An RNA of 207 nucleotides, treated with 2A3 and DMS and read out base by base. Reactivities are given for positions 27 through 156. The RNA was probed in 150 mM KOAc, 10 mM MgCl2 and 150 mM bicine (pH 8.5) at 24 C. Source: RMDB library RNAMAK, as collected in RNAgym.

[RMDB]
RNA sequence: GGGAACGACUCGAGUAGAGUCGAAAAGGGGUCUUGUUCGAGUCGAGAGGUAAGCUUGGAUUUAUGGGACUGAAGCCUCCACGGUCCCAUUGUCAGCUUACCGCUCGACUAAGACAGACAAGACGGAGGCACCCAAACGCUACGUUCGCGUAGCGAAGGUUAUUAUCCAGUUCGCUGGAUAAUAACCAAAAGAAACAACAACAACAAC
Reactivity to 2A3 in 0.01 (KOAc 150mM, MgCl2 10mM, bicine 150mM(pH8.5), 24C), signal-to-noise 4, nucleotides 027 to 156: g060g010g000g020u010c010u010u010g020u020u040c020g010a000g010u000c000g010a000g010a010g000g000u020a000a010g000c050u160u300g140g000a060u190u210u080a030u070g010g000g000a000c010u010g030a090a020g010c000c010u020c000c010a010c000g010g000u000c010c000c000a000u010u010g020u040c060a010g000c000u000u000a000c000c000g000c000u000c000g000a000c000u000a000a000g000a000c010a000g020a010c010a000a000g000a010c030g010g030a010g010g000c010a060c060c000c000a080a100a020c020g000c000u010a010c000g030u050u070c230g000c000g120u020a000g000c000g010a070a070
Reactivity to DMS in 0.01 (KOAc 150mM, MgCl2 10mM, bicine 150mM(pH8.5), 24C), signal-to-noise 2, nucleotides 027 to 156: g000g000g030g030u000c020u010u000g040u000u010c030g000a050g000u000c010g020a030g000a040g000g020u000a010a010g020c030u010u010g030g010a080u000u020u000a020u000g010g040g010a030c000u000g020a040a090g020c040c010u000c020c020a300c060g020g000u010c000c020c000a010u000u020g010u010c050a080g000c000u000u000a010c010c000g000c010u000c010g020a010c030u000a010a060g010a030c300a080g010a060c000a000a020g000a030c000g020g070a050g080g020c010a100c020c000c020a100a110a180c010g000c010u000a010c000g010u000u000c300g030c000g040u000a000g000c010g000a050a090
Background: For 2A3, 6,852 sequencing reads were counted. The DMS profile rests on 4,272 reads.